An RNA of 207 nucleotides, treated with DMS and 2A3 and read out base by base.
RNA sequence: GGGAACGACUCGAGUAGAGUCGAAAAUACAAUUGUUACUUCGGUAACAAUUGUAAAAAACCGUAGGGACGAUGGAGUUCUAUAAUCUUCGAAAGAGGGUAGAACCCAUUCGUCCCUAAACGGAAAAAACUGCCUACUGUUUCGACAGUAGGCAGAACACUAUACUAGGAUUCGUCCUAGUAUAGUGAAAAGAAACAACAACAACAAC
Reactivity to DMS in 0.01 (KOAc 150mM, MgCl2 10mM, bicine 150mM(pH8.5), 24C), signal-to-noise 1, nucleotides 027 to 156: u010a030c000a000a010u000u010g010u000u000a010c000u010u020c290g110g000u000a010a010c010a010a020u000u010g050u000a010a040a060a050a010a080c010c010g000u000a060g020g010g030a010c010g030a030u000g000g020a150g010u000u000c000u010a030u000a250a170u010c010u020u000c040g020a130a130a300g010a030g000g010g050u010a010g010a030a070c000c020c010a090u000u010c000g030u000c000c010c000u000a000a010a020c010g050g010a000a080a030a080a160a140c020u000g000c000c000u000a040c060u020g010u000u000u010c250g020a100c020a030g050u000a000g020g000c010a000g000a020a040
Reactivity to 2A3 in 0.01 (KOAc 150mM, MgCl2 10mM, bicine 150mM(pH8.5), 24C), signal-to-noise 1, nucleotides 027 to 156: u040a000c000a000a000u000u000g000u000u000a010c010u020u020c190g100g000u000a000a000c000a000a000u000u010g000u010a050a040a000a000a010a000c000c000g000u010a010g000g000g010a010c000g000a000u000g030g020a280g080u010u020c000u010a000u000a020a180u020c010u080u060c030g050a180a140a080g020a020g000g030g010u020a000g000a000a000c030c010c000a000u020u030c000g000u020c000c000c000u000a000a000a000c000g050g050a010a000a000a020a000a060c000u050g010c000c000u000a020c000u000g040u010u160u190c270g060a010c000a020g000u020a010g000g080c010a000g000a000a000
The 2A3 profile rests on 936 reads. The reactions ran in a buffer of 150 mM KOAc, 10 mM MgCl2 and 150 mM bicine (pH 8.5), at 24 C.